[RMDB]
RNA sequence: GGGAACGACUCGAGUAGAGUCGAAAACGGGAGUCGCAAGAGCUGUCGAUGACAGCACCCCAGGUGACCCGAACCUUGGAGGUCACGCCGCUCCCGCGGUGGUUCACCCGCAAGUACGAUUCGCGUCAGGUUAUAGAUGUUUCGACAUCUAUAACCUAAAAGAAACAACAACAACAAC
Reactivity to 2A3 in 0.01 (KOAc 150mM, MgCl2 10mM, bicine 150mM(pH8.5), 24C), signal-to-noise 9, nucleotides 027 to 126: c040g010g020g000a010g030u060c040g040c140a110a060g050a040g120c010u000g010u020c060g300a160u300g010a010c000a000g000c000a090c000c000c000c000a010g010g000u000g010a020c020c040c060g010a010a010c010c000u000u010g020g000a020g010g010u010c000a000c020g000c000c000g000c010u060c010c010c010g000c000g000g000u010g000g010u020u030c020a050c030c030c010g040c060a090a060g050u100a090c060g050a170u040u140c060g000c020g110u100c080
Reactivity to DMS in 0.01 (KOAc 150mM, MgCl2 10mM, bicine 150mM(pH8.5), 24C), signal-to-noise 7, nucleotides 027 to 126: c070g000g000g000a030g020u000c110g010c130a140a120g010a140g010c000u000g000u000c000g020a180u050g010a020c000a000g010c020a170c050c000c010c020a030g020g000u000g010a030c010c010c300g000a040a020c020c010u000u020g000g000a300g000g000u000c040a010c030g010c030c020g010c020u010c050c060c070g010c010g000g020u010g000g000u000u000c030a300c070c040c030g010c120a060a060g010u010a060c060g000a120u000u010c050g010c050g020u010c120